[RMDB]
RNA sequence: GGGAACGACUCGAGUAGAGUCGAAAAGCCGAUGAAUUGCCGAGAAGCCUGGCUCGAAAUCGUCGACGCAUCGACGACGGUCCUGCCAUGAGACCGUAACGAGGACGUGUCGCCUCGAAUGGCGUCGUAUAACAUGAGUGGUUCGCCACUCAUGUAAUCUUACGGAAUCUUUCGAGAUUCCGUAAGAAAAAGAAACAACAACAACAAC
Reactivity to DMS in 0.01 (KOAc 150mM, MgCl2 10mM, bicine 150mM(pH8.5), 24C), signal-to-noise 2, nucleotides 027 to 156: g070c000c000g040a070u010g020a090a100u000u000g010c080c040g000a160g030a180a110g010c090c010u000g030g000c040u010c050g000a080a010a060u000c010g020u000c010g030a050c160g000c140a190u000c050g050a060c020g020a010c020g000g000u010c000c020u030g000c030c230a070u000g000a060g000a030c010c010g020u000a060a100c020g000a090g020g000a180c060g020u000g020u000c070g020c000c020u020c010g000a050a060u000g000g050c030g000u000c050g020u000a140u020a110a070c000a000u000g010a000g070u000g020g000u000u030c300g000c010c010a030c000u000c000a000u020g000u000a050a090
Reactivity to 2A3 in 0.01 (KOAc 150mM, MgCl2 10mM, bicine 150mM(pH8.5), 24C), signal-to-noise 3, nucleotides 027 to 156: g040c030c020g020a020u100g070a080a180u090u150g030c050c000g020a010g040a130a040g040c080c150u120g060g000c030u020c020g090a130a080a110u020c010g000u000c010g000a050c080g010c120a130u050c030g000a000c000g000a000c010g010g000u010c000c010u090g000c010c000a020u010g020a010g000a050c010c050g040u120a020a000c000g000a010g020g030a040c080g150u120g040u130c070g000c000c000u000c000g010a010a000u040g000g020c000g020u040c010g020u040a100u020a180a000c010a000u000g000a000g000u000g000g030u060u080c090g030c040c000a000c000u010c000a000u000g000u000a000a010

This 207-nucleotide RNA was probed chemically with DMS and 2A3. The 2A3 profile rests on 1,471 reads. Source: RMDB library M2RFPK, as collected in RNAgym. The RNA was probed in 150 mM KOAc, 10 mM MgCl2 and 150 mM bicine (pH 8.5) at 24 C.